[RMDB]
RNA sequence: GGGAACGACUCGAGUAGAGUCGAAAAGAAGGUAAAACAGCCUGUGGGUGAAACACACCCACAGGGCCCAUUGGGCGCUAGCACUCUGGUAUCACGGUACCUUUGUGCGCCUGAUUUACCCAGAAAACCGCUAGGAUUAGUUCGCUAAUCCUAGCGGAAAAGAAACAACAACAACAAC
Reactivity to 2A3 in 0.01 (KOAc 150mM, MgCl2 10mM, bicine 150mM(pH8.5), 24C), signal-to-noise 2, nucleotides 027 to 126: g120a030a020g000g000u010a040a010a010a030c000a000g000c000c010u000g010u000g000g000g020u010g010a000a080a000c150a000c010a000c060c000c000a000c000a000g000g000g000c020c000c010a020u250u300g000g000g000c050g010c060u130a030g010c020a000c000u000c000u000g020g000u010a000u010c020a110c290g160g000u000a000c010c000u000u000u000g000u000g000c010g030c000c000u000g000a000u000u000u000a050c000c000c000a020g060a020a020a010a090
Reactivity to DMS in 0.01 (KOAc 150mM, MgCl2 10mM, bicine 150mM(pH8.5), 24C), signal-to-noise 1, nucleotides 027 to 126: g030a200a140g000g000u000a000a000a040a070c000a000g060c000c000u100g000u000g000g000g040u020g000a070a160a090c180a300c070a010c000c000c000a000c000a000g110g000g010c000c040c020a020u060u000g060g020g020c000g170c030u020a000g100c070a000c000u010c010u000g000g000u020a040u000c000a100c180g040g000u000a000c060c000u010u000u000g000u000g000c000g020c000c000u000g030a120u010u010u010a000c000c070c060a300g000a190a120a070a160